RNA sequence: GGGAACGACUCGAGUAGAGUCGAAAAGAGCCAGUUAUGGAGACAGCAUUGAAGGUGUCUUCUGGGUUGCAAACAGCCAAGCGGACACCAAUACCCGCUCUGAUAUUGUCGAAAGGGACCCAAGCAGUCAUGAGGCUAUUCCUACUAGGUUUGCGCCGAAUUAAGGGCAUUUCGAUGCCCUUAAUUCAAAAGAAACAACAACAACAAC
Reactivity to DMS in 0.01 (KOAc 150mM, MgCl2 10mM, bicine 150mM(pH8.5), 24C), signal-to-noise 1, nucleotides 027 to 156: g020a110g070c020c000a080g000u000u010a080u000g010g020a030g010a070c020a140g000c050a130u000u000g050a110a220g020g000u040g010u010c010u040u000c000u010g000g040g020u000u010g000c080a150a150a140c030a110g050c030c040a010a030g000c050g000g040a090c010a080c040c050a050a120u000a020c060c010c030g000c050u000c020u020g010a140u000a080u000u010g000u010c070g000a050a080a130g010g010g100a090c020c070c010a120a060g040c020a070g000u000c100a080u010g000a190g000g000c000u010a130u010u000c020c000u000a080c130u000a100g040g020u000u000u000g010c000g020c130c110
Reactivity to 2A3 in 0.01 (KOAc 150mM, MgCl2 10mM, bicine 150mM(pH8.5), 24C), signal-to-noise 1, nucleotides 027 to 156: g080a010g000c000c050a030g060u130u150a100u120g040g010a030g040a070c060a020g090c130a160u020u270g040a130a070g030g000u000g000u000c000u030u000c000u080g050g000g020u050u020g110c160a140a090a160c000a150g010c000c010a030a000g020c020g000g000a000c000a000c020c000a000a020u000a020c010c000c000g000c000u010c010u020g110a080u020a100u220u240g100u080c100g030a010a000a090g050g020g040a040c030c000c000a050a070g050c040a000g060u030c000a040u110g050a010g020g000c000u040a030u010u030c000c000u040a140c060u090a050g100g000u030u090u050g090c070g030c010c040